[RMDB]
RNA sequence: GGGAACGACUCGAGUAGAGUCGAAAAAUGAGUCAGCCACUCUGACAGCAGUGAACUCGCCGCGUAUCCCGUCACCGGAGGAAUGUAGUCUUCCAGAUGCAGCAGUACGCUACCAUCAGGCUGAAUCGGUAGUGCUACGAUUCGUCGUAGCACUACCAAAAGAAACAACAACAACAAC
Reactivity to 2A3 in 0.01 (KOAc 150mM, MgCl2 10mM, bicine 150mM(pH8.5), 24C), signal-to-noise 2, nucleotides 027 to 126: a000u120g010a040g020u000c020a000g030c050c000a020c030u040c030u060g090a070c050a050g080c020a010g030u020g060a050a030c010u010c090g000c030c000g020c010g040u020a110u110c070c000c000g090u080c040a010c050c050g000g040a010g000g100a060a050u180g010u300a080g170u010c000u030u050c020c010a050g010a100u090g000c030a000g000c000a000g040u060a010c030g000c000u010a080c000c000a040u080c060a030g030g000c000u030g050a030a080u110c020
Reactivity to DMS in 0.01 (KOAc 150mM, MgCl2 10mM, bicine 150mM(pH8.5), 24C), signal-to-noise 1, nucleotides 027 to 126: a110u000g000a060g020u000c040a090g000c050c130a160c110u000c110u000g000a120c110a040g010c140a060g020u000g000a070a140c030u010c080g020c010c030g010c050g020u020a110u000c030c020c040g010u010c060a120c140c100g040g000a070g000g000a060a100u000g000u010a100g020u020c020u010u000c000c000a130g000a060u020g030c050a080g030c060a060g030u000a080c040g020c000u010a050c060c040a070u010c060a140g000g040c040u010g000a030a020u010c080

Structure probing data (2A3 and DMS) for a 177-nucleotide construct. Reactivities are given for positions 27 through 126. The data come from the RNA Mapping Database (RMDB), library OK2TST. For DMS, 925 sequencing reads were counted. The reactions ran in a buffer of 150 mM KOAc, 10 mM MgCl2 and 150 mM bicine (pH 8.5), at 24 C.